[RMDB]
The record gives the reactivity of an RNA of 177 nucleotides to DMS and 2A3.
The reactions ran in a buffer of 150 mM KOAc, 10 mM MgCl2 and 150 mM bicine (pH 8.5), at 24 C.
Source: RMDB library OK2TRN, as collected in RNAgym.
DMS adducts were read by reverse transcription with MarathonRT.
For 2A3, 1,198 sequencing reads were counted.
The DMS profile rests on 1,272 reads.
Values are in units of 0.01, from 0 to 300, in steps of 10.

RNA sequence: GGGAACGACUCGAGUAGAGUCGAAAAGGAGCCGAGAGGAAAGUGCUGGCCCAGCCCUCUGAGCGCUCCUCGAGGUGUGCGAGAGGCCCUUCCUCGGCCCCAAAGCCGUCUGCCGGGCUAAGGCGUGGCCCUCCUACAUUUUCGAAUGUAGGAGGGCAAAAGAAACAACAACAACAAC
Reactivity to DMS in 0.01 (KOAc 150mM, MgCl2 10mM, bicine 150mM(pH8.5), 24C), signal-to-noise 2, nucleotides 027 to 126: g000g010a080g020c010c020g010a050g020a090g020g000a080a090a070g010u010g030c060u010g010g030c010c020c010a300g010c060c000c000u000c020u000g000a140g040c090g010c080u010c020c000u010c060g000a060g010g000u010g000u030g030c040g000a060g030a300g000g000c020c050c010u010u000c030c010u000c020g010g000c030c000c030c050a030a130a070g000c100c020g030u000c010u000g000c140c100g010g010g000c030u000a140a060g020g010c050g020u020g000
Reactivity to 2A3 in 0.01 (KOAc 150mM, MgCl2 10mM, bicine 150mM(pH8.5), 24C), signal-to-noise 1, nucleotides 027 to 126: g060g000a030g010c000c030g000a020g000a010g090g160a160a140a020g090u100g080c050u060g100g070c040c020c000a000g010c000c020c000u000c060u100g110a120g020c140g000c010u060c020c000u010c000g050a050g030g040u130g060u080g060c050g020a080g000a070g150g010c030c020c040u100u060c000c000u020c000g010g030c000c000c010c040a050a140a060g090c000c020g050u060c030u060g040c020c060g000g090g010c030u050a050a000g000g010c030g070u080g040